[RMDB]
RNA sequence: GGGAACGACUCGAGUAGAGUCGAAAAAAAGCAUUAAUAGAAAGCGCUGUGGCACGUGGUGAAUUAGAUGAAAGUGUCUUUAAUCAACUUGUUACUGAUAUGUUACUUGAACAUCACUACAAUAUCCAGCGUGGAAGGUUUUCGAACCUUCCACGCUAAAAGAAACAACAACAACAAC
Reactivity to 2A3 in 0.01 (KOAc 150mM, MgCl2 10mM, bicine 150mM(pH8.5), 24C), signal-to-noise 1, nucleotides 027 to 126: a000a000a000g100c100a120u080u080a050a030u190a100g300a100a000a000g300c080g000c020u020g070u060g000g010c030a030c030g080u000g050g000u000g100a200a000u110u020a000g120a140u050g110a300a150a000g060u000g200u000c000u000u000u000a080a080u060c050a020a020c050u230u020g050u300u140a020c000u030g140a080u030a000u020g030u000u000a000c000u000u000g000a030a000c000a000u000c000a000c000u070a000c000a070a000u000a080u000c000c000
The data come from the RNA Mapping Database (RMDB), library OK1LIB. Structure probing data (2A3) for a 177-nucleotide construct. The 2A3 profile rests on 335 reads. The RNA was probed in 150 mM KOAc, 10 mM MgCl2 and 150 mM bicine (pH 8.5) at 24 C. 2A3 adducts were read by reverse transcription with SuperScript II with manganese.